[RMDB]
RNA sequence: GGGAACGACUCGAGUAGAGUCGAAAAGUGAAGAUAAAGAUAUUCAUGAACAGAACAGUAAGAAGCCUGUUAUGGUCUAUAUCCAUGGGGGAUCUUACAUGGAGGGAACCGGUAACAUGAUUGAUGGCAGCAUUUUGGCCAGCUAUGGGAACGUCAACAUAGUGGGUAUCUUCGGAUACCCACUAUGAAAAGAAACAACAACAACAAC
Reactivity to DMS in 0.01 (KOAc 150mM, MgCl2 10mM, bicine 150mM(pH8.5), 24C), signal-to-noise 1, nucleotides 027 to 156: g030u010g020a010a100g010a080u000a060a080a070g010a120u000a050u010u010c030a070u010g010a070a140c050a150g010a090a060c000a150g000u000a080a160g020a150a140g010c140c040u000g010u010u040a040u000g000g010u000c000u000a140u010a080u010c000c030a040u000g060g000g010g030g000a160u000c040u000u000a040c010a030u000g000g010a130g040g000g020a130a100c050c040g010g010u010a070a030c030a080u000g010a100u000u010g010a080u010g000g000c000a110g020c100a160u000u000u000u040g010g020c030c030a070g000c030u000a080u000g000g000g020a080a130c140g000u020c030a060a090
Reactivity to 2A3 in 0.01 (KOAc 150mM, MgCl2 10mM, bicine 150mM(pH8.5), 24C), signal-to-noise 2, nucleotides 027 to 156: g030u020g010a070a050g000a190u110a080a100a010g100a060u080a150u170u080c050a030u080g020a040a020c030a080g070a030a070c030a000g010u070a040a060g020a170a000g140c000c000u060g070u160u050a010u030g010g000u010c080u080a170u050a030u230c030c010a020u030g040g000g000g000g000a020u070c000u020u040a010c010a060u060g010g030a030g010g000g010a020a020c080c000g060g000u020a040a010c050a090u080g010a110u100u110g060a050u090g080g000c040a030g000c030a050u050u040u020u110g020g020c020c040a000g000c030u030a030u090g030g000g010a100a000c020g010u030c010a010a010